About this RNA: Structure probing data (DMS and 2A3) for a 177-nucleotide construct. Values cover nucleotides 27 to 126.

RNA sequence: GGGAACGACUCGAGUAGAGUCGAAAAACUAGUAUGUACAGGGGUGAGUUGACCUGUAAUCUAGACUGCUGACCAUCAACUCACCGGUCAGCUGGAUGAUGUCCACAGAGUACGACAUCAGUACUCAGUCUAUGGAUGCCUUCGGGUAUCUAUAGACAAAAGAAACAACAACAACAAC
Reactivity to DMS in 0.01 (KOAc 150mM, MgCl2 10mM, bicine 150mM(pH8.5), 24C), signal-to-noise 9, nucleotides 027 to 126: a190c010u000a010g010u040a030u010g020u010a020c000a010g000g010g000g020u010g010a080g020u000u000g000a070c010c010u000g000u000a010a020u010c010u000a010g000a170c040u000g010c000u010g000a020c010c010a160u030c140a050a070c120u020c110a100c190c190g010g000u000c000a010g010c000u000g010g000a100u020g010a080u010g000u010c010c040a100c250a090g000a030g010u000a020c050g010a120c160a090u030c110a090g000u010a010c000u000c010a180
Reactivity to 2A3 in 0.01 (KOAc 150mM, MgCl2 10mM, bicine 150mM(pH8.5), 24C), signal-to-noise 9, nucleotides 027 to 126: a000c010u010a010g050u100a070u180g140u030a010c000a010g020g040g040g060u130g130a160g070u090u110g110a100c000c000u000g000u000a000a010u010c000u000a010g070a120c030u030g000c000u010g000a010c010c000a040u150c050a070a130c080u060c120a080c050c070g000g000u000c000a000g000c010u010g000g020a060u090g010a020u080g070u040c020c010a070c050a090g040a010g030u030a020c040g070a030c080a140u100c030a040g000u020a010c000u000c020a000
Overview: The RNA was probed in 150 mM KOAc, 10 mM MgCl2 and 150 mM bicine (pH 8.5) at 24 C. The DMS profile rests on 56,541 reads.